RNA sequence: GGGAACGACUCGAGUAGAGUCGAAAAGACUGACUUCCUAGUCCUGACUCUUCAGUCGAGAGAAGGACUUCGACUUCUCGAUCGAGAGAGACUCUAGCUAGGACUGAGACUAGGAGAAGCUGAAGUCAGAGGAAGCUCUCUAGUCGACUGAAGCUGACGGACGAAGUAAGUUCGCUUACUUCGUCCGAAAAGAAACAACAACAACAAC
Reactivity to 2A3 in 0.01 (KOAc 150mM, MgCl2 10mM, bicine 150mM(pH8.5), 24C), signal-to-noise 1, nucleotides 027 to 156: g030a010c040u080g000a030c010u060u050c010c010u010a010g000u040c010c060u010g050a090c040u010c010u010u050c040a120g070u070c030g030a000g000a000g010a040a020g010g050a030c000u030u070c030g030a010c010u040u080c010u000c020g110a160u020c110g000a020g000a030g000a000g080a120c010u000c000u080a040g070c030u020a020g060g040a060c030u040g060a000g010a030c020u030a030g040g070a010g020a040a000g020c110u080g010a020a000g030u000c020a010g030a030g060g030a060a040g000c020u000c000u000c010u060a020g050u000c020g000a000c000u020g010a030a010g030c060u040g000a060
The record gives the reactivity of an RNA of 207 nucleotides to 2A3. 2A3 adducts were read by reverse transcription with SuperScript II with manganese. The data come from the RNA Mapping Database (RMDB), library OK3TST.